[RMDB]
RNA sequence: GGGAACGACUCGAGUAGAGUCGAAAAUGAUGUGGGUGGGCUGCUAAGGUCUGCUUUUCCAGGCAUGGGCUUGGAGAGAAAUCUGACAUUGCUACACUCCGAACUAGUUCUAGACAUCUGCACGGUAGAAGACUAUCAGGUUCGCCUGAUAGUCUUCAAAAGAAACAACAACAACAAC
Reactivity to DMS in 0.01 (KOAc 150mM, MgCl2 10mM, bicine 150mM(pH8.5), 24C), signal-to-noise 3, nucleotides 027 to 126: u000g000a080u010g030u000g020g000g030u000g000g000g010c060u010g010c050u000a100a060g010g010u000c050u010g030c030u000u010u000u000c040c000a010g010g020c000a290u010g030g020g020c010u000u000g000g000a040g000a040g000a070a040a050u000c020u000g030a070c110a090u000u000g020c030u000a050c050a030c030u000c020c070g020a080a080c090u010a140g000u010u000c020u000a220g010a070c040a050u000c030u000g010c070a090c070g000g000u000a130
Reactivity to 2A3 in 0.01 (KOAc 150mM, MgCl2 10mM, bicine 150mM(pH8.5), 24C), signal-to-noise 2, nucleotides 027 to 126: u080g030a050u100g010u110g050g050g000u050g000g030g080c110u070g000c060u130a050a010g110g010u010c050u050g070c000u040u040u110u020c010c000a010g010g010c030a050u300g090g300g000c000u000u000g000g050a010g010a000g000a020a140a020u060c090u070g030a010c010a090u100u130g010c010u090a140c040a030c040u010c000c010g040a050a010c030u060a030g030u070u000c010u040a000g010a050c020a170u030c000u040g000c030a030c030g010g000u050a030